[RMDB]
RNA sequence: GGGAACGACUCGAGUAGAGUCGAAAACAAGAGGUCUGUGAGCGGAAGAAGUGCUAAAGGCAGCCCGUUAUCUUGGUCCAAAGCAUCCAGUGCUCAACCGGAGACGGCGUCACCGUGGCGUCGUCCACGCUCUAUGAUCAUUCGUGAUCAUAGAGCGAAAAGAAACAACAACAACAAC
Reactivity to 2A3 in 0.01 (KOAc 150mM, MgCl2 10mM, bicine 150mM(pH8.5), 24C), signal-to-noise 5, nucleotides 027 to 126: c020a010a060g050a050g040g050u050c040u090g100u080g040a010g030c040g080g010a100a060g060a110a020g160u070g050c020u100a130a060a020g090g010c010a020g030c020c010c010g040u080u060a120u080c040u040u150g030g020u040c020c010a070a070a000g000c000a040u060c050c030a050g040u040g060c010u020c070a040a050c050c030g050g010a070g010a030c010g010g040c000g010u020c010a080c200c140g120u170g010g000c010g000u010c000g020u000c000c000a020
Reactivity to DMS in 0.01 (KOAc 150mM, MgCl2 10mM, bicine 150mM(pH8.5), 24C), signal-to-noise 4, nucleotides 027 to 126: c080a080a090g010a100g010g010u000c030u000g000u000g000a070g030c050g010g000a120a100g010a110a090g040u000g000c040u010a070a090a120g000g000c060a060g030c040c010c030g010u010u010a080u000c040u010u010g010g010u010c030c040a070a110a070g020c030a050u000c070c100a070g010u000g000c010u000c110a110a070c080c070g010g020a130g000a020c000g010g010c020g010u010c020a110c220c180g000u010g000g000c010g000u000c020g000u010c010c110a110
Chemical mapping of a 177-nucleotide RNA with 2A3 and DMS. Values cover nucleotides 27 to 126. High 2A3 reactivity points to a flexible backbone, as in loops and unpaired stretches. Conditions: 150 mM KOAc, 10 mM MgCl2 and 150 mM bicine (pH 8.5), 24 C. Source: RMDB library OK2TRN, as collected in RNAgym.